An RNA of 177 nucleotides, treated with 2A3 and DMS and read out base by base.
For 2A3 the reverse transcriptase was SuperScript II with manganese.

RNA sequence: GGGAACGACUCGAGUAGAGUCGAAAACGUUGAUUCAGCUGAUCAGUGGGCUGAGCAGGUGUCCCCUUUCUCCCUCACCAUUCCAUGUGCGUUCCUCCCAGAACUGCACACCUGGUCAAAGAGGAAGUUGUUAUAAGGUCUUCGGACCUUAUAACAAAAAAGAAACAACAACAACAAC
Reactivity to 2A3 in 0.01 (KOAc 150mM, MgCl2 10mM, bicine 150mM(pH8.5), 24C), signal-to-noise 6, nucleotides 027 to 126: c030g050u040u040g050a250u030u040c010a020g010c010u060g090a230u120c040a100g120u270g100g040g000c020u020g010a000g000c010a010g020g040u050g070u030c000c000c000c010u010u030u010c000u020c010c010c000u030c020a010c020c000a040u160u060c050c020a030u030g000u000g010c010g000u000u000c000c010u090c010c010c000a000g000a010a010c040u180g000c000a000c000a000c010c040u020g000g030u040c050a090a030a010g030a000g040g000a020a010g050
Reactivity to DMS in 0.01 (KOAc 150mM, MgCl2 10mM, bicine 150mM(pH8.5), 24C), signal-to-noise 8, nucleotides 027 to 126: c060g010u020u000g010a120u020u000c020a030g010c000u000g000a180u020c200a120g020u020g010g010g010c010u000g000a030g020c050a050g000g010u000g000u010c000c000c010c030u000u010u000c000u000c010c020c020u030c300a070c020c030a060u020u010c170c220a120u000g010u010g020c010g010u000u000c000c060u010c040c050c040a210g000a010a020c010u040g020c010a010c010a020c160c120u000g000g000u000c110a070a140a110g010a040g000g000a030a030g000

The data come from the RNA Mapping Database (RMDB), libraries RFM100 and RFMREP.